Structure probing data (2A3 and DMS) for a 177-nucleotide construct. DMS adducts were read by reverse transcription with MarathonRT. The DMS profile rests on 893 reads. Source: RMDB library OK2TRN, as collected in RNAgym.
RNA sequence: GGGAACGACUCGAGUAGAGUCGAAAACAUAUUGAUCGUAAGGACAAGUUCCAUGCUACUUUAUUCCUUUGCUUCAAUGAUAGGUAUGCUAGAAUAUUUGGGAAUGAAGACUAGUUCAAACUCCGGCCUAUGGCAGUCAGUUCGCUGACUGCCAUAGAAAAGAAACAACAACAACAAC
Reactivity to 2A3 in 0.01 (KOAc 150mM, MgCl2 10mM, bicine 150mM(pH8.5), 24C), signal-to-noise 2, nucleotides 027 to 126: c030a030u270a110u180u220g080a120u110c010g080u130a000a140g000g010a020c040a110a080g050u030u000c010c020a010u040g000c000u000a030c010u000u020u060a060u030u120c000c000u090u140u090g030c010u040u150c020a110a180u160g070a150u080a060g040g050u160a070u200g110c040u120a000g050a170a090u150a120u130u120u060g010g000g000a010a010u040g030a050a000g040a020c090u010a000g010u000u060c070a070a010a050c020u000c010c000g050g000c000
Reactivity to DMS in 0.01 (KOAc 150mM, MgCl2 10mM, bicine 150mM(pH8.5), 24C), signal-to-noise 1, nucleotides 027 to 126: c140a140u020a090u000u000g000a140u000c030g000u010a100a110g010g000a030c110a060a080g010u000u010c060c030a120u020g020c050u010a030c020u000u000u010a030u030u020c020c000u000u000u000g030c110u000u030c080a100a090u000g010a140u010a010g010g030u000a080u020g000c040u000a110g000a090a050u010a110u010u010u000g020g010g030a060a040u010g000a020a030g010a070c070u000a040g030u000u010c140a040a020a190c130u020c050c040g030g000c260